[RMDB]
RNA sequence: GGGAACGACUCGAGUAGAGUCGAAAACGCUGGGAACGGAGGUCUCUGUAUUGUCAGCUGAAGCGCGCACGGCUUGGAUUUAUACAGGUGCCCUUACGUUCCUGUGCUGAAGCGCGCACGGCAACCGAAAGGUGCGACAAGUGGAUUCGUCCACUAAUAUCAUAUACGUUUUCGAACGUAUAUGAUAAAAAGAAACAACAACAACAAC
Reactivity to 2A3 in 0.01 (KOAc 150mM, MgCl2 10mM, bicine 150mM(pH8.5), 24C), signal-to-noise 5, nucleotides 027 to 156: c040g040c000u020g020g000g010a000a000c000g010g030a010g000g020u030c020u000c000u030g030u000a040u050u130g150u160c090a010g010c020u030g050a180a060g050c040g000c000g000c050a020c040g020g000c000u080u200g190g000a090u140u300u150a060u070a010c000a020g150g070u060g050c000c020c030u020u070a090c000g000u000u000c000c000u000g010u010g010c020u040g020a100a050g000c010g010c000g010c010a010c020g020g000c010a040a040c010c000g060a120a050a010g040g000u010g010c020g030a060c070a140a040g000u000g000g020a030u040u110c210g060u020c060c000a000c000u000a040a050
Reactivity to DMS in 0.01 (KOAc 150mM, MgCl2 10mM, bicine 150mM(pH8.5), 24C), signal-to-noise 2, nucleotides 027 to 156: c040g000c030u010g020g010g000a020a000c020g010g000a030g010g000u000c040u000c010u000g030u010a000u000u000g020u000c020a090g020c010u010g010a050a060g030c020g030c020g030c030a300c030g010g010c020u000u000g080g000a110u000u010u000a040u000a050c010a020g000g000u000g020c050c000c020u000u000a070c030g020u000u000c000c000u000g000u020g010c030u000g000a070a050g020c030g020c010g040c000a290c020g020g010c020a060a090c020c020g010a130a150a200g000g030u000g030c000g010a050c080a100a050g030u010g000g000a100u000u000c300g030u000c000c000a010c000u000a070a170
Notes: This 207-nucleotide RNA was probed chemically with 2A3 and DMS. Conditions: 150 mM KOAc, 10 mM MgCl2 and 150 mM bicine (pH 8.5), 24 C. It was measured as part of the RMDB library RNAMAK. The 2A3 profile rests on 5,826 reads.